[RMDB]
RNA sequence: GGGAACGACUCGAGUAGAGUCGAAAAUUUGUGAAAAUGAGGAGCGCCAGUGUAUGCGGAUACAUUAAUGUCAAGGGGAGAUCAAGGUGGUGUGGUCCGCCUCUCGUUUUUGGCAAAAACUUGCGAGCUAUAUUAUUAAUUUCGAUUAAUAAUAUAGAAAAGAAACAACAACAACAAC
Reactivity to DMS in 0.01 (KOAc 150mM, MgCl2 10mM, bicine 150mM(pH8.5), 24C), signal-to-noise 2, nucleotides 027 to 126: u020u020u010g020u000g010a110a030a120a070u000g000a060g000g000a060g020c040g010c050c070a080g020u000g010u010a050u000g000c110g010g020a080u010a000c020a010u000u000a020a000u000g000u000c000a000a010g000g000g020g000a000g000a010u000c130a120a050g030g010u020g020g020u000g050u000g020g000u030c040c000g000c000c030u020c010u010c030g000u020u010u020u020u010g000g000c020a000a030a080a090a060c090u020u010g030c070g010a120g010
Reactivity to 2A3 in 0.01 (KOAc 150mM, MgCl2 10mM, bicine 150mM(pH8.5), 24C), signal-to-noise 1, nucleotides 027 to 126: u030u010u050g010u010g090a060a040a040a090u090g010a020g030g040a070g020c100g010c040c060a010g000u020g030u040a070u060g100c060g110g000a030u020a030c010a000u050u070a070a000u010g010u010c000a010a020g000g000g000g000a000g000a000u040c010a010a000g010g000u040g000g030u010g100u040g040g080u000c000c040g020c040c000u020c010u010c010g080u000u000u000u010u060g040g050c000a000a000a000a140a150c040u070u130g030c070g010a030g000

Annotation
The record gives the reactivity of an RNA of 177 nucleotides to DMS and 2A3. 2A3 adducts were read by reverse transcription with SuperScript II with manganese.